[RMDB]
RNA sequence: GGGAACGACUCGAGUAGAGUCGAAAAGCGUGAGGGAUGGCGGCUAUAGGGUUACAUCAAUCUACCAGCAGUGAUAUAUCGCGAGUAUCAUUGGUUGUAGAAGAAGGGCAGGCCAACUACGUGCCAGAAUAUUUAAUAUAUUCGUAUAUUAAAUAUUAAAAGAAACAACAACAACAAC
Reactivity to 2A3 in 0.01 (KOAc 150mM, MgCl2 10mM, bicine 150mM(pH8.5), 24C), signal-to-noise 2, nucleotides 027 to 126: g070c050g030u100g050a070g000g060g000a080u020g040g020c010g020g000c010u070a050u140a240g110g010g030u060u150a070c020a060u120c040a020a100u000c010u010a000c000c010a000g050c000a000g010u000g000a000u000a000u020a050u110c050g020c070g060a030g040u000a000u000c010a000u000u040g250g000u020u000g030u010a020g000a060a010g070a020a010g060g010g000c020a030g030g050c010c000a020a000c010u060a050c060g040u040g020c020c010a040g070
Reactivity to DMS in 0.01 (KOAc 150mM, MgCl2 10mM, bicine 150mM(pH8.5), 24C), signal-to-noise 2, nucleotides 027 to 126: g030c040g000u040g000a060g000g010g000a160u010g010g020c080g010g030c060u000a090u060a090g030g010g010u020u020a070c100a070u020c060a110a140u010c010u000a020c020c040a020g000c010a010g040u010g000a010u000a010u020a090u020c060g000c120g010a100g000u000a010u000c010a000u020u000g010g000u000u000g010u000a010g000a010a090g020a080a100g010g000g000c080a050g020g000c010c030a070a110c110u010a050c030g000u010g010c000c020a180g000